[RMDB]
RNA sequence: GGGAACGACUCGAGUAGAGUCGAAAAUCUAGGAAACUGUGCCAUAAUCUUCAAGCUUUCCGCGCAAAAUGAUCAAGUGAAAAUGCAAAAUGACGUCUUUGAGAAAGUGGACCCUAGAUGUGCGGAACUAAAUCGUAAUCUUCGGAUUACGAUUUAGAAAAGAAACAACAACAACAAC
Reactivity to 2A3 in 0.01 (KOAc 150mM, MgCl2 10mM, bicine 150mM(pH8.5), 24C), signal-to-noise 4, nucleotides 027 to 126: u000c000u010a000g000g050a130a130a190c150u170g120u250g130c010c000a060u060a130a140u080c020u100u070c060a040a020g020c010u070u050u010c020c000g010c000g000c040a060a040a070a160u150g050a150u130c050a110a030g090u090g170a120a030a020a050u090g030c030a040a030a060a240u100g040a050c020g060u000c040u020u060u100g060a050g050a030a050a020g020u020g010g000a030c000c010c000u020a010g010a020u010g020u040g030c020g050g010a030a010
Reactivity to DMS in 0.01 (KOAc 150mM, MgCl2 10mM, bicine 150mM(pH8.5), 24C), signal-to-noise 5, nucleotides 027 to 126: u000c010u020a060g010g010a150a100a110c270u010g030u010g020c000c010a040u000a120a180u010c030u000u010c190a080a150g010c140u000u000u000c020c030g010c080g030c040a040a060a100a070u010g010a080u010c070a040a080g020u000g000a040a060a050a100u010g000c140a040a080a080a090u000g000a120c080g010u000c030u000u000u000g000a090g000a070a050a170g010u000g010g010a070c040c010c000u000a020g000a050u000g020u010g020c030g010g000a030a110
Description
The record gives the reactivity of an RNA of 177 nucleotides to 2A3 and DMS. The DMS profile rests on 3,678 reads. Values cover nucleotides 27 to 126.